[RMDB]
RNA sequence: GGGAACGACUCGAGUAGAGUCGAAAAGCCGUUGCGCAGAAGUGCGAUCGGUCCGCCGUCGACCGCCUCCGGUGCGAUGUGGCCAACGCACAGGCCGGUGGUUCCACCGGAGAACCGGCCGUCGGUCGGUGAUCCCUGGUUUCGACCAGGGAUCACCAAAAGAAACAACAACAACAAC
Reactivity to 2A3 in 0.01 (KOAc 150mM, MgCl2 10mM, bicine 150mM(pH8.5), 24C), signal-to-noise 3, nucleotides 027 to 126: g050c000c010g020u050u180g110c000g000c020a010g040a210a040g270u070g090c010g010a000u100c000g030g040u010c010c030g000c000c000g040u000c010g000a000c010c000g050c090c010u010c000c000g030g010u010g000c090g000a020u120g100u240g070g000c000c000a120a020c060g050c190a130c050a080g010g000c050c000g050g080u110g150g110u070u030c000c000a000c030c000g000g000a000g000a020a050c050c000g010g000c010c000g000u000c020g000g010u050c070